[RMDB]
RNA sequence: GGGAACGACUCGAGUAGAGUCGAAAAGAUAUGGAAAGACUACCCACCGAACUACGAGGUAGUGUCGGAAACGACAUUUCCUCGCGAGGUCUUUCCUAAGUCAAAGUGAAGGCUUCGGCCUUCACAAGAUCAGUUAAUAGUUCGCUAUUAACUGAUCAAAAGAAACAACAACAACAAC
Reactivity to 2A3 in 0.01 (KOAc 150mM, MgCl2 10mM, bicine 150mM(pH8.5), 24C), signal-to-noise 7, nucleotides 027 to 126: g020a050u180a110u190g000g000a010a000a000g000a010c020u120a210c050c050c080a060c050c060g060a140a110c110u190a070c300g000a000g000g000u020a010g010u010g010u000c000g020g000a050a040a040c000g010a000c000a000u020u030u030c000c000u020c010g060c020g030a040g000g000u000c000u000u000u000c000c000u010a060a020g100u120c100a220a060a040g000u010g000a000a000g010g000c010u070u190c300g120g000c000c000u010u000c000a000c000a000a000
Reactivity to DMS in 0.01 (KOAc 150mM, MgCl2 10mM, bicine 150mM(pH8.5), 24C), signal-to-noise 9, nucleotides 027 to 126: g010a090u010a120u000g000g010a010a010a000g010a020c010u000a120c030c030c050a300c150c050g000a080a060c100u020a200c010g000a020g010g010u000a010g020u000g000u000c000g000g000a060a050a150c000g000a010c000a010u000u000u000c000c000u000c000g000c030g010a070g010g000u000c000u000u000u000c000c000u000a050a070g010u010c130a070a110a130g010u000g000a020a010g010g010c000u000u010c240g020g010c000c000u000u000c000a000c000a060a060